RNA sequence: GGGAACGACUCGAGUAGAGUCGAAAACAGAGAAGACGUUAAAACUAAAUCGAAGUAAAUGCUAACGACGAAAAGUUUGCAUUGGCCGCCUAACAGCCGCCUUGGGUUGUAACUGACCUCGAAACAGGACUUAGUCUAUGUUCGCAUAGACUAAGUCAAAAGAAACAACAACAACAAC
Reactivity to 2A3 in 0.01 (KOAc 150mM, MgCl2 10mM, bicine 150mM(pH8.5), 24C), signal-to-noise 1, nucleotides 027 to 126: c040a000g030a000g010a150a040g040a010c050g020u050u080a000a160a080a000c010u060a050a090a140u190c070g040a080a010g030u100a040a080a060u030g000c030u020a000a020c020g080a010c060g060a030a060a040a050g010u000u030u020g000c010a000u010u010g040g030c000c000g010c000c040u030a050a010c010a010g040c000c020g030c010c050u060u030g110g020g010u030u000g070u060a010a010c010u010g030a020c010c000u000c030g070a070a120a040c010a010g160
Reactivity to DMS in 0.01 (KOAc 150mM, MgCl2 10mM, bicine 150mM(pH8.5), 24C), signal-to-noise 2, nucleotides 027 to 126: c060a150g000a160g010a090a110g020a200c150g000u030u010a070a070a060a070c060u000a050a130a070u030c070g000a090a100g010u010a060a070a040u000g000c000u000a020a050c010g020a150c160g020a100a090a100a080g010u010u000u000g000c040a020u010u000g010g020c020c180g000c010c030u000a050a080c190a140g030c030c080g020c050c030u030u010g020g000g000u000u000g000u020a060a040c060u010g000a160c110c000u000c060g010a050a040a040c200a130g020